[RMDB]
RNA sequence: GGGAACGACUCGAGUAGAGUCGAAAAGAUAUGGAAGACGAGGCUUUUGACGGAUUUCGAUCGGAAACGAUGUCCGAUAAGCCUACGUCUUCCUAAGUCAAAACUCGCGCACUUCGGUGCGCGAGAAUCUUAUAUGCGUGUUCGCACGCAUAUAAGAAAAAGAAACAACAACAACAAC
Reactivity to DMS in 0.01 (KOAc 150mM, MgCl2 10mM, bicine 150mM(pH8.5), 24C), signal-to-noise 3, nucleotides 027 to 126: g030a040u000a300u010g000g010a040a010g000a010c000g010a100g000g010c000u000u000u000u000g020a210c110g010g000a020u000u010u000c080g010a050u000c170g020g000a120a130a130c010g020a030u000g010u000c000c020g020a140u000a010a010g010c020c010u000a060c000g000u000c000u000u000c000c000u000a010a060g010u010c050a060a070a120a150c010u000c000g010c020g030c000a010c010u000u010c200g020g020u000g000c000g030c000g010a000g000a010a040
Reactivity to 2A3 in 0.01 (KOAc 150mM, MgCl2 10mM, bicine 150mM(pH8.5), 24C), signal-to-noise 3, nucleotides 027 to 126: g000a030u090a030u160g000g010a000a000g000a010c010g020a010g020g010c040u010u040u200u300g260a120c040g000g040a020u060u090u120c090g090a190u140c300g220g110a110a140a020c010g020a010u010g000u050c000c010g050a050u030a070a020g000c010c010u000a020c000g000u000c010u010u000c000c000u000a000a000g000u000c030a000a020a080a150c010u010c000g020c000g020c010a050c060u080u070c300g090g000u030g050c010g010c020g000a000g000a000a000
The record gives the reactivity of an RNA of 177 nucleotides to DMS and 2A3. Conditions: 150 mM KOAc, 10 mM MgCl2 and 150 mM bicine (pH 8.5), 24 C. Source: RMDB library TTRDEL, as collected in RNAgym. For DMS, 2,869 sequencing reads were counted.